RNA sequence: GGGAACGACUCGAGUAGAGUCGAAAAGAUGUGUGUUGGAUUUACAGGAUUUCUAUGCCAAGCAGAGAAGUACGUGAAAACAGGAAAGCAAAAUGCAUAAGUUGCAAUAAUAGUUUUGUGGUUUAGCUGAAUAAUGUCCUAUAUCAACAGAGGAUAACGUAUACGGUAUGUUCGCAUACCGUAUACGAAAAGAAACAACAACAACAAC
Reactivity to DMS in 0.01 (KOAc 150mM, MgCl2 10mM, bicine 150mM(pH8.5), 24C), signal-to-noise 4, nucleotides 027 to 156: g010a120u000g030u010g020u010g040u010u010g030g000a130u000u000u000a100c060a070g020g000a150u000u000u020c030u000a090u000g020c050c050a050a120g040c060a080g020a090g020a050a080g010u000a040c040g010u020g000a060a040a080a080c050a090g010g000a040a060a100g030c040a050a050a080a080u000g000c040a070u000a040a190g010u000u000g020c030a050a060u010a060a120u010a090g010u000u000u000u020g040u000g020g030u000u010u000a090g000c070u000g010a080a130u000a040a090u000g000u000c010c030u000a110u010a180u000c080a060a120c140a140g000a100g010g000a050u000a030a190
Reactivity to 2A3 in 0.01 (KOAc 150mM, MgCl2 10mM, bicine 150mM(pH8.5), 24C), signal-to-noise 6, nucleotides 027 to 156: g100a060u100g050u020g030u000g030u060u050g050g040a120u050u060u110a120c100a050g010g010a020u060u080u000c040u060a040u070g010c030c030a050a020g000c040a030g050a010g000a100a010g020u070a020c040g030u060g090a030a030a030a040c040a030g000g080a060a030a010g040c050a040a030a050a030u100g010c020a030u050a170a090g090u120u060g000c020a010a020u100a140a030u070a090g030u020u030u040u070g050u020g000g060u020u050u040a020g000c030u020g030a040a050u160a100a050u080g030u020c000c000u060a080u030a030u260c060a020a110c020a040g070a010g080g010a020u070a100a010
Source: RMDB library OK3TST, as collected in RNAgym. Chemical mapping of a 207-nucleotide RNA with DMS and 2A3. The reactions ran in a buffer of 150 mM KOAc, 10 mM MgCl2 and 150 mM bicine (pH 8.5), at 24 C. For 2A3 the reverse transcriptase was SuperScript II with manganese. The 2A3 profile rests on 5,463 reads.